[RMDB]
RNA sequence: GGGAACGACUCGAGUAGAGUCGAAAAUUACCAGUUUGAUUGGUAUCAAACACAACAAUGAAUCCAGCAGACUCACCAGGAGCUAGAACACCAUUAUAAAGCCAUUUAUUAUUGUUAACAGCCCAUACGCCGAUAGGAUCUUCGGAUCCUAUCGGCGAAAAGAAACAACAACAACAAC
Reactivity to 2A3 in 0.01 (KOAc 150mM, MgCl2 10mM, bicine 150mM(pH8.5), 24C), signal-to-noise 1, nucleotides 027 to 126: u000u000a090c030c030a000g030u000u010u020g150a300u000u070g010g120u220a010u000c060a000a000a000c050a000c120a010a020c040a070a300u240g000a040a030u000c000c000a000g000c000a000g000a050c210u000c060a000c050c000a000g030g030a030g050c000u000a000g060a000a100c000a090c090c030a060u050u200a010u150a100a050a060g020c040c000a000u000u070u100a100u000u000a000u000u000g040u000u000a240a000c000a090g010c000c000c120a000u070a280

Source: RMDB library OK1LIB, as collected in RNAgym. Structure probing data (2A3) for a 177-nucleotide construct. The reactions ran in a buffer of 150 mM KOAc, 10 mM MgCl2 and 150 mM bicine (pH 8.5), at 24 C. For 2A3 the reverse transcriptase was SuperScript II with manganese.